The record gives the reactivity of an RNA of 177 nucleotides to DMS and 2A3.
The RNA was probed in 150 mM KOAc, 10 mM MgCl2 and 150 mM bicine (pH 8.5) at 24 C.
For 2A3 the reverse transcriptase was SuperScript II with manganese.
RNA sequence: GGGAACGACUCGAGUAGAGUCGAAAACGUCGCUCGACACGGGGGUGGCCCGGCCACCCUUUGCGCACCUUGGCACCGACCAUGAGACGUCGUGUGUGCCGAACGCCGUUUCCGGCAGCCCGGAAACGGAAACGUCCGAGUUCGCUCGGACGUUUCCAAAAGAAACAACAACAACAAC
Reactivity to DMS in 0.01 (KOAc 150mM, MgCl2 10mM, bicine 150mM(pH8.5), 24C), signal-to-noise 3, nucleotides 027 to 126: c060g010u010c020g040c030u020c020g040a090c070a100c050g010g020g000g040g040u000g010g000c020c120c210g010g030c000c000a030c000c000c000u000u000u000g050c030g010c100a120c090c050u020u010g020g000c050a070c070c070g000a050c020c030a090u040g010a190g010a170c150g000u020c030g020u030g000u020g010u000g030c020c000g010a040a100c040g030c000c020g010u000u000u000c010c010g000g020c140a100g000c070c000c000g000g000a020a040a030c090
Reactivity to 2A3 in 0.01 (KOAc 150mM, MgCl2 10mM, bicine 150mM(pH8.5), 24C), signal-to-noise 5, nucleotides 027 to 126: c010g050u030c030g010c020u050c040g070a010c030a040c110g030g020g000g010g010u020g000g020c050c190c030g080g020c010c000a010c010c000c000u010u030u050g020c010g000c000a060c020c030u050u080g020g020c040a060c070c060g050a070c010c010a090u170g110a030g020a160c050g020u060c010g000u050g050u040g010u040g090c010c010g010a080a010c030g020c020c010g000u000u030u040c010c000g020g020c090a080g070c030c010c010g030g020a060a030a040c030
High DMS reactivity at an A or C suggests that its Watson-Crick edge is free. It was measured as part of the RMDB libraries RFM100 and RFMREP.